[RMDB]
RNA sequence: GGGAACGACUCGAGUAGAGUCGAAAAUGUCAGCUCCAGCAACUGUUCGGGCGGAUCAAGGGAGAUUCCGGCGUGGGCGCCAAGCUACAUGGCGAUCGUCGAGAUCCAGGCUCGUACGGCGGCCCACUUUCGUGUGACAGUUCGCUGUCACACGAAAAAAAGAAACAACAACAACAAC
Reactivity to 2A3 in 0.01 (KOAc 150mM, MgCl2 10mM, bicine 150mM(pH8.5), 24C), signal-to-noise 2, nucleotides 027 to 126: u140g080u100c020a040g000c000u020c030c010a040g020c040a030a130c040u110g000u060u020c050g030g020g000c030g050g000a100u080c060a000a090g100g060g000a140g010a050u160u000c040c000g030g000c000g000u030g050g030g010c000g010c020c000a010a040g080c000u050a050c070a160u070g060g000c020g020a000u090c020g050u010c020g060a000g000a080u010c020c060a090g010g010c010u030c030g060u090a020c050g000g030c000g000g060c010c020c000a050c020
Reactivity to DMS in 0.01 (KOAc 150mM, MgCl2 10mM, bicine 150mM(pH8.5), 24C), signal-to-noise 1, nucleotides 027 to 126: u020g000u030c000a150g050c010u010c060c080a100g010c140a050a030c070u000g020u020u000c000g000g030g020c000g020g000a030u000c050a120a180g010g000g000a180g010a130u000u000c010c050g000g000c040g000u000g000g010g010c040g000c000c010a020a180g010c140u010a010c080a070u050g010g020c010g060a020u030c060g000u050c220g000a060g000a080u000c000c170a110g060g000c040u000c200g020u010a050c200g020g030c070g020g010c020c010c020a100c000
Annotation
Chemical mapping of a 177-nucleotide RNA with 2A3 and DMS. For DMS, 1,312 sequencing reads were counted. For 2A3 the reverse transcriptase was SuperScript II with manganese. As a SHAPE reagent, 2A3 marks flexible, mostly unpaired nucleotides at the ribose 2'-OH. The reactions ran in a buffer of 150 mM KOAc, 10 mM MgCl2 and 150 mM bicine (pH 8.5), at 24 C. For 2A3, 963 sequencing reads were counted. For DMS the reverse transcriptase was MarathonRT. Values cover nucleotides 27 to 126.